[RMDB]
RNA sequence: GGGAACGACUCGAGUAGAGUCGAAAAACUCUGUGUCGGCUUUCUUCUAGCAGCCGGUUUAAUAUCACUAGCUUUUAUGCCAUUCGACCAACAGUCUCCCAAGAUGAGACAAACAUCUCAGAAAUCAUUUCAUAUGGCAUCCAGGAGGGAAAGCAAGUACAUGCUUAGGUUUCGACCUAAGCAUGUAAAAAGAAACAACAACAACAAC
Reactivity to DMS in 0.01 (KOAc 150mM, MgCl2 10mM, bicine 150mM(pH8.5), 24C), signal-to-noise 1, nucleotides 027 to 156: a250c000u000c010u010g030u020g020u030c020g060g010c050u000u000u000c030u000u010c010u010a120g000c050a090g060c010c010g000g000u000u000u040a080a070u010a070u020c060a070c030u000a040g070c020u000u000u030u000a100u000g000c010c010a130u020u000c030g040a100c000c000a020a130c070a060g020u010c030u000c010c000c030a130a240g000a080u020g030a000g020a080c080a090a100a060c030a300u000c000u000c060a080g020a150a020a050u000c060a080u000u000u010c100a060u000a000u000g000g030c010a000u000c020c110a110g000g090a030g000g000g010a060a050a120g020c030a000a190g000
Reactivity to 2A3 in 0.01 (KOAc 150mM, MgCl2 10mM, bicine 150mM(pH8.5), 24C), signal-to-noise 1, nucleotides 027 to 156: a000c010u030c030u080g070u030g020u100c000g100g020c020u240u110u030c020u150u000c080u160a030g010c090a010g020c100c030g020g070u050u110u080a110a090u120a070u100c030a010c050u050a030g000c000u030u120u070u060a040u150g000c000c000a010u040u060c050g010a020c030c000a060a000c020a020g010u000c020u010c060c000c000a020a000g050a080u070g010a000g020a050c080a040a170a020c070a010u040c060u000c070a000g160a020a180a060u040c040a080u130u090u000c040a060u050a010u110g030g000c000a010u020c010c010a030g030g050a050g000g090g000a010a020a040g000c010a020a010g020
This 207-nucleotide RNA was probed chemically with DMS and 2A3. Conditions: 150 mM KOAc, 10 mM MgCl2 and 150 mM bicine (pH 8.5), 24 C. Source: RMDB library OK3TST, as collected in RNAgym.